[RMDB]
RNA sequence: GGGAACGACUCGAGUAGAGUCGAAAAGGGAGCGAGAAGAGAUGGGCACAGGCUACUCUGCGACCUUGGAAUAACCCAGCCUGGGAAGCUCCUGGCCACAUUUUCCUUCUUUUCUUUCUCAGCUCAACGUGUAUCCGAUGUUCGCAUCGGAUACACGAAAAGAAACAACAACAACAAC
Reactivity to 2A3 in 0.01 (KOAc 150mM, MgCl2 10mM, bicine 150mM(pH8.5), 24C), signal-to-noise 1, nucleotides 027 to 126: g090g000g000a040g000c070g050a030g070a100a040g010a030g010a000u050g040g000g000c090a090c040a300g010g050c020u060a080c090u090c090u090g000c000g010a010c010c000u000u020g030g020a110a100u110a110a090c000c030c010a000g030c020c010u010g090g000g010a030a010g000c010u000c030c020u000g030g000c030c000a200c030a090u090u110u120u030c060c000u070u050c000u070u080u010u000c040u050u070u000c020u000c040a050g000c030u050c060a050a060
Reactivity to DMS in 0.01 (KOAc 150mM, MgCl2 10mM, bicine 150mM(pH8.5), 24C), signal-to-noise 1, nucleotides 027 to 126: g020g020g010a000g070c300g000a070g000a070a050g060a010g020a090u000g000g000g040c140a050c000a090g030g000c300u000a030c150u000c040u020g020c000g000a300c000c010u000u000g000g000a010a010u030a070a140c030c000c030a160g000c020c010u010g040g000g000a020a300g010c010u000c040c100u000g000g000c040c030a090c070a040u000u000u000u010c050c050u000u000c060u000u000u000u000c040u010u000u000c010u000c010a110g000c020u000c020a110a240
An RNA of 177 nucleotides, treated with 2A3 and DMS and read out base by base.
It was measured as part of the RMDB library OK2TRN.
Reactivities are given for positions 27 through 126.
2A3 adducts were read by reverse transcription with SuperScript II with manganese.